The record gives the reactivity of an RNA of 177 nucleotides to 2A3 and DMS. The DMS profile rests on 12,190 reads. For 2A3 the reverse transcriptase was SuperScript II with manganese. Source: RMDB library OK2TRN, as collected in RNAgym. Reactivities are given for positions 27 through 126. DMS adducts were read by reverse transcription with MarathonRT.
[RMDB]
RNA sequence: GGGAACGACUCGAGUAGAGUCGAAAAUUACUCGGUGGGGAUGGAAGAUGGCAUUCCGCGAAUAGCCAACACGCUGCCUCGGCGGGAGAAAGCCACUUUUGCCCUGCGUGAAGCGGAUUGGCCUGCAGAUAUUUAUACCGUUCGCGGUAUAAAUAUCAAAAGAAACAACAACAACAAC
Reactivity to 2A3 in 0.01 (KOAc 150mM, MgCl2 10mM, bicine 150mM(pH8.5), 24C), signal-to-noise 3, nucleotides 027 to 126: u060u020a050c010u010c030g000g050u050g000g030g010g020a050u080g010g040a030a060g090a170u050g010g000c010a030u030u020c010c000g000c010g030a040a080u100a070g000c020c010a080a060c060a030c080g050c030u040g030c030c030u040c030g170g000c000g000g030g020a050g070a080a080a010g050c020c000a030c010u030u010u010u040g020c000c000c000u010g000c020g040u090g050a080a010g020c080g040g040a040u030u040g060g100c000c010u030g000c020a030
Reactivity to DMS in 0.01 (KOAc 150mM, MgCl2 10mM, bicine 150mM(pH8.5), 24C), signal-to-noise 8, nucleotides 027 to 126: u010u000a100c040u000c020g010g030u000g010g000g010g010a090u010g000g000a050a050g010a130u000g010g040c020a170u000u000c020c030g010c020g000a070a080u000a070g010c030c120a090a130c300a090c200g010c020u000g010c160c080u000c080g020g020c010g000g010g000a060g000a100a080a120g010c080c060a030c030u000u000u000u000g010c010c010c020u000g010c040g010u000g010a110a060g010c030g000g010a090u000u000g010g010c010c030u000g000c140a170